[RMDB]
RNA sequence: GGGAACGACUCGAGUAGAGUCGAAAACAGUUUCAUGGCACACUCUCUCCAUUUCUCUACCGUUCAUGCAGCGGUUGAUCGAUUGGGUUGCUGGUUGAUUGAUCGAUCGAUGGUCAGGAGUUGGAAGCCGAAAAUCGCUUUUCGAAGCGAUUUUCGGAAAAGAAACAACAACAACAAC
Reactivity to DMS in 0.01 (KOAc 150mM, MgCl2 10mM, bicine 150mM(pH8.5), 24C), signal-to-noise 1, nucleotides 027 to 126: c230a070g110u000u000u020c100a050u000g000g030c000a190c030a120c060u030c030u000c120u040c020c000a020u050u000u010c070u020c080u000a290c010c080g060u010u010c040a010u080g000c210a130g000c050g020g010u000u000g070a000u000c030g000a080u000u030g000g030g060u020u000g020c010u000g000g000u010u000g000a100u000u000g000a000u020c000g000a010u000c010g030a030u000g000g000u000c060a060g010g000a000g000u020u070g050g000a090a080g020
Reactivity to 2A3 in 0.01 (KOAc 150mM, MgCl2 10mM, bicine 150mM(pH8.5), 24C), signal-to-noise 1, nucleotides 027 to 126: c000a070g030u000u060u050c050a100u170g110g030c050a070c000a000c000u000c000u040c000u000c000c020a030u000u000u000c070u010c040u130a020c000c000g120u040u040c090a140u220g010c170a000g000c030g000g000u030u090g000a010u000c000g010a010u000u060g070g000g000u170u130g080c060u050g040g090u120u030g010a020u000u030g000a000u010c040g000a000u080c010g020a050u040g050g000u070c090a060g030g010a040g080u130u100g040g010a050a010g030
Chemical mapping of a 177-nucleotide RNA with DMS and 2A3. For 2A3 the reverse transcriptase was SuperScript II with manganese. Values cover nucleotides 27 to 126. For DMS, 1,156 sequencing reads were counted. The data come from the RNA Mapping Database (RMDB), library RFM100.